RNA sequence: GGGAACGACUCGAGUAGAGUCGAAAAGAUAUGGAGUUGUGGACAUGCUCUAAGGGUCGGAAACGACCCGAAAGAGCAACAGCCACACCUCCUAAGUCAAAGAGACAGUUGUUCGCAACUGUCUCAACUACAUUUGAUCCUUCGGGAUCAAAUGUAGAAAAGAAACAACAACAACAAC
Reactivity to 2A3 in 0.01 (KOAc 150mM, MgCl2 10mM, bicine 150mM(pH8.5), 24C), signal-to-noise 2, nucleotides 027 to 126: g000a000u050a010u090g010g020a020g010u000u000g010u000g030g000a050c140a300u300g030c020u000c000u000a050a050g000g010g000u000c000g000g000a170a020a020c000g000a010c020c140c000g010a000a030a000g010a000g000c020a020a010c100a030g010c010c000a000c000a000c000c000u000c020c000u010a060a020g030u000c040a120a110a120g000a000g000a000c000a010g000u000u010g060u110u160c290g060c140a000a000c000u000g000u020c000u000c000a000a000
Reactivity to DMS in 0.01 (KOAc 150mM, MgCl2 10mM, bicine 150mM(pH8.5), 24C), signal-to-noise 3, nucleotides 027 to 126: g000a050u000a300u000g000g000a020g020u000u000g000u010g000g020a030c090a280u010g010c000u020c000u010a090a300g010g010g010u000c000g010g030a050a060a180c010g000a020c010c000c000g000a030a080a050g000a010g010c010a010a030c260a100g000c010c000a020c010a000c030c000u000c020c000u010a020a050g000u000c040a070a120a130g000a000g000a010c000a010g010u010u000g000u000u020c250g040c000a000a010c010u000g000u000c000u000c000a020a090